RNA sequence: GGGAACGACUCGAGUAGAGUCGAAAACGACCACCGUUCGGCCGAGUUCGCCCCGCGACUCGUGACCGACGGUGACGACGACGUCCACCUCGGUCACUACCGUCGCGACGGUGACCGCGUCGCCUGCCAUCCGUCACGAGUUCGCUCGUGACGGAUGAAAAGAAACAACAACAACAAC
Reactivity to DMS in 0.01 (KOAc 150mM, MgCl2 10mM, bicine 150mM(pH8.5), 24C), signal-to-noise 2, nucleotides 027 to 126: c000g000a080c140c110a100c130c020g000u000u000c030g000g000c000c020g010a050g000u000u010c020g000c020c010c060c070g010c030g000a030c000u000c140g000u030g000a070c010c000g010a030c120g050g010u010g000a030c030g030a140c170g000a160c060g000u000c050c060a030c020c010u040c000g040g000u020c030a040c030u010a130c300c250g010u000c010g030c020g020a000c130g020g000u000g000a020c000c030g010c170g010u000c020g000c020c030u000g020c080
Reactivity to 2A3 in 0.01 (KOAc 150mM, MgCl2 10mM, bicine 150mM(pH8.5), 24C), signal-to-noise 2, nucleotides 027 to 126: c030g070a080c060c100a080c110c030g010u050u030c000g020g000c020c010g020a080g060u110u140c010g000c000c000c010c010g020c000g000a000c010u030c070g020u010g020a030c010c000g010a030c080g000g000u000g010a000c000g010a010c050g050a090c060g010u060c070c050a030c010c000u010c000g000g000u010c020a020c020u060a070c010c080g030u020c010g000c010g010a000c020g000g010u010g010a010c000c010g020c070g020u000c010g010c000c010u060g030c030